The record gives the reactivity of an RNA of 207 nucleotides to 2A3 and DMS. For 2A3 the reverse transcriptase was SuperScript II with manganese. The data come from the RNA Mapping Database (RMDB), library M2RFPK.
[RMDB]
RNA sequence: GGGAACGACUCGAGUAGAGUCGAAAAACGCCUCACAAUGUGCGGCAAAGAAACAUUGUUUAUGCAAAGGCACUUCGCAAUGUGUGCUCAAACAUUGCUUAUUCAAACACGCUUCACAAUGUGCGACAAAACUUCACGGUCUUCGGACCGUGAAGAACUAUACACGUGUCUUCGGACACGUGUAUAGAAAAGAAACAACAACAACAAC
Reactivity to 2A3 in 0.01 (KOAc 150mM, MgCl2 10mM, bicine 150mM(pH8.5), 24C), signal-to-noise 6, nucleotides 027 to 156: a000c050g060c010c000u040c000a010c010a050a110u070g000u000g010c020g020g020c060a080a090a030g130a030a070a000c040a030u020u040g060u060u120u120a130u130g040c080a080a090a080g140g000c000a010c010u090u070c060g020c090a060a090u080g010u010g020u010g040c050u090c170a050a060a020c030a030u010u010g000c000u070u080a110u080u100c070a010a080a030c030a010c130g000c010u030u040c040a010c010a060a100u070g020u020g040c010g070a060c120a020a130a060a040c000u000u010c000a000c000g000g000u010c000u010u090c150g090g000a010c010c000g000u000g000a000a000g000a000a000
Reactivity to DMS in 0.01 (KOAc 150mM, MgCl2 10mM, bicine 150mM(pH8.5), 24C), signal-to-noise 2, nucleotides 027 to 156: a070c100g050c000c010u010c050a050c000a030a020u000g090u000g030c030g010g000c040a060a090a080g040a100a060a050c000a050u000u010g020u020u010u010a110u010g040c060a100a270a120g000g000c030a070c000u000u000c080g000c100a120a100u010g040u000g050u010g020c060u010c070a070a180a010c050a040u000u010g010c000u020u010a030u010u000c070a130a090a060c120a070c160g000c030u000u000c160a070c100a060a120u000g010u000g010c040g020a220c050a050a030a110a100c000u000u010c020a030c000g010g000u000c010u000u010c250g040g020a010c000c000g010u000g000a010a000g020a050a080